[RMDB]
RNA sequence: GGGAACGACUCGAGUAGAGUCGAAAACGCCGCGUCCCCGGCCGAUAUCUCACCCUGGUCGAGGCGGUGUUGUGUGGUGUAGAUGUUCGCGAUUGUCUCGGAAGCCCCCAGCACCCGCCAGUAAGUCUCUUUGUGUGUGGUUCGCCACACACAAAGAAAAAGAAACAACAACAACAAC
Reactivity to 2A3 in 0.01 (KOAc 150mM, MgCl2 10mM, bicine 150mM(pH8.5), 24C), signal-to-noise 3, nucleotides 027 to 126: c010g000c000c000g020c020g060u100c030c000c000c000g000g020c020c010g090a060u120a170u120c030u030c050a070c000c000c080u150g000g080u080c090g030a060g020g020c000g010g000u010g000u020u010g070u010g030u030g010g010u060g040u100a070g010a140u090g050u160u060c000g000c070g140a160u100u240g050u020c020u000c000g040g000a090a010g030c000c020c000c000c000a000g000c000a020c000c030c010g000c000c020a010g020u080a090a040g040u010c010
Reactivity to DMS in 0.01 (KOAc 150mM, MgCl2 10mM, bicine 150mM(pH8.5), 24C), signal-to-noise 1, nucleotides 027 to 126: c040g040c000c000g040c080g020u030c030c040c030c040g000g030c080c020g040a100u000a050u020c000u030c060a090c090c000c010u030g000g020u020c020g020a120g000g050c000g000g050u000g030u000u020g070u010g030u000g000g000u070g000u030a070g000a120u000g000u030u030c060g010c120g000a070u050u020g000u000c120u000c030g030g000a180a130g000c040c020c030c090c020a080g010c070a060c040c010c020g080c070c000a050g050u010a020a110g000u040c000